[RMDB]
Description
Structure probing data (DMS and 2A3) for a 177-nucleotide construct. 2A3 adducts were read by reverse transcription with SuperScript II with manganese.
RNA sequence: GGGAACGACUCGAGUAGAGUCGAAAAGAUAUGGAAGUACGAUUCCGAUAAGCUAAGGUCGGAAACGACCUGUAGCUUUUGACGGAACCGUACUUCCUAAGUCAAAAGGGUGACUUCGGUCACCCAACAUCUUUUUAUACUUCGGUAUAAAAAGAUGAAAAGAAACAACAACAACAAC
Reactivity to DMS in 0.01 (KOAc 150mM, MgCl2 10mM, bicine 150mM(pH8.5), 24C), signal-to-noise 8, nucleotides 027 to 126: g010a030u000a300u010g000g000a020a010g010u000a000c000g010a040u000u000c000c010g020a190u010a020a020g010c010u000a080a030g000g010u000c000g020g000a090a060a140c000g000a010c000c000u000g010u010a010g010c000u010u000u000u010g020a210c170g000g000a010a010c020c010g020u000a000c000u000u000c000c000u000a010a060g010u000c030a080a100a140a150g010g010g020u000g010a010c000u000u020c210g030g000u000c000a000c000c000c000a020a040
Reactivity to 2A3 in 0.01 (KOAc 150mM, MgCl2 10mM, bicine 150mM(pH8.5), 24C), signal-to-noise 6, nucleotides 027 to 126: g010a000u030a010u070g000g000a000a010g010u010a010c020g020a030u010u040c030c230g050a090u150a300a000g000c010u010a010a000g010g010u000c010g000g010a030a020a020c000g000a000c000c010u020g030u020a000g000c010u020u060u070u140g220a170c210g000g000a000a000c000c000g000u000a000c000u000u000c000c000u000a000a000g000u010c010a010a020a080a190g000g000g000u010g000a000c000u070u140c300g090g000u010c000a000c000c000c000a000a000